The data come from the RNA Mapping Database (RMDB), library M2RFPK. Structure probing data (2A3 and DMS) for a 207-nucleotide construct. For 2A3 the reverse transcriptase was SuperScript II with manganese. For DMS the reverse transcriptase was MarathonRT. Reactivities are given for positions 27 through 156.

RNA sequence: GGGAACGACUCGAGUAGAGUCGAAAAGCCGAUGAAUUGCCGAGAAGCCUGGCUCGAAAUCGUCGACGCAUCGACGACGGUCCUGCCAUGACACCGUAACGAGGACAUGUCGCCUCGAAUGGCGUCGUAUAACAUGAGUGGUUCGCCACUCAUGUAACACUUGUUCUAGGUUCGCCUAGAACAAGUGAAAAGAAACAACAACAACAAC
Reactivity to 2A3 in 0.01 (KOAc 150mM, MgCl2 10mM, bicine 150mM(pH8.5), 24C), signal-to-noise 6, nucleotides 027 to 156: g070c030c010g040a020u080g050a090a150u170u140g030c060c020g050a040g040a130a050g020c060c080u090g030g000c010u020c060g080a090a050a050u100c050g040u010c010g010a010c020g020c030a040u040c000g010a000c000g000a000c000g010g010u010c010c010u050g050c060c010a100u120g030a090c060a050c090c100g040u040a070a030c030g010a000g010g020a010c050a150u190g000u030c030g020c050c030u010c000g030a040a050u090g090g000c000g010u010c010g010u050a120u050a120a010c000a000u000g000a000g010u010g010g030u040u080c150g050c060c000a000c000u020c000a000u000g010u010a010a000
Reactivity to DMS in 0.01 (KOAc 150mM, MgCl2 10mM, bicine 150mM(pH8.5), 24C), signal-to-noise 2, nucleotides 027 to 156: g010c000c010g000a130u000g010a080a120u000u010g000c010c010g000a130g000a100a180g030c020c050u000g000g000c020u000c050g010a080a050a070u000c040g000u000c000g010a040c090g030c140a130u000c010g010a040c000g020a000c010g010g000u000c000c000u010g040c020c020a070u000g030a130c120a190c080c080g000u000a060a160c050g000a080g000g000a050c030a110u010g030u000c060g000c000c070u000c040g000a060a110u000g020g020c000g010u000c030g000u000a060u000a100a050c000a010u010g010a020g050u000g000g010u000u000c300g040c000c000a000c010u000c000a010u000g010u000a060a190

The reactions ran in a buffer of 150 mM KOAc, 10 mM MgCl2 and 150 mM bicine (pH 8.5), at 24 C.